The record gives the reactivity of an RNA of 207 nucleotides to DMS and 2A3. It was measured as part of the RMDB library M2RFPK. The reactions ran in a buffer of 150 mM KOAc, 10 mM MgCl2 and 150 mM bicine (pH 8.5), at 24 C. The DMS profile rests on 2,900 reads. High 2A3 reactivity points to a flexible backbone, as in loops and unpaired stretches. The 2A3 profile rests on 1,560 reads.

[RMDB]
RNA sequence: GGGAACGACUCGAGUAGAGUCGAAAAUUCCAUUUGAGUAUCCUGAAAACGGGCUUUUCAGCAUGGAACGUACAUAUUAAAUAGUAGGAGUGCAUAGUGGCCCGUAUAGCAGGCAUUAACAUUCCUUAAAACGUGAAAAGGUUCGCCUUUUCACGAAUCUUUGUCAUUUCUUCGGAAAUGACAAAGAAAAAGAAACAACAACAACAAC
Reactivity to DMS in 0.01 (KOAc 150mM, MgCl2 10mM, bicine 150mM(pH8.5), 24C), signal-to-noise 2, nucleotides 027 to 156: u000u000c020c010a120u020u000u000g020a250g010u010a050u000c010c000u000g000a090a060a120a060c070g040g040g010c060u010u010u000u000c050a240g020c050a030u020g000g020a090a080c030g000u000a110c140a100u000a160u000u000a050a110a300u010a110g010u000a040g000g000a180g030u000g000c020a140u000a140g030u010g020g010c000c010c000g030u000a040u010a190g030c050a010g030g020c050a050u000u030a080a080c070a190u000u000c030c010u000u010a060a020a110a130c030g000u010g000a010a010a000a030g000g030u010u010c300g010c010c010u010u010u020u010c000a010c010g000a000a060
Reactivity to 2A3 in 0.01 (KOAc 150mM, MgCl2 10mM, bicine 150mM(pH8.5), 24C), signal-to-noise 3, nucleotides 027 to 156: u020u000c000c000a020u100u100u110g090a060g050u100a140u170c000c010u030g030a020a070a020a050c030g000g000g040c030u120u100u070u060c070a010g000c010a020u010g040g050a170a010c040g050u020a000c050a030u180a090u190u300a150a150a130u140a060g030u010a000g010g190a100g000u010g020c020a070u050a170g120u090g030g000c000c000c010g010u010a010u000a030g010c000a010g000g010c000a000u010u030a070a040c020a040u050u160c000c000u070u140a080a120a040a020c010g000u000g010a010a000a030a020g000g010u010u060c150g130c000c000u020u000u000u000c000a000c000g000a000a000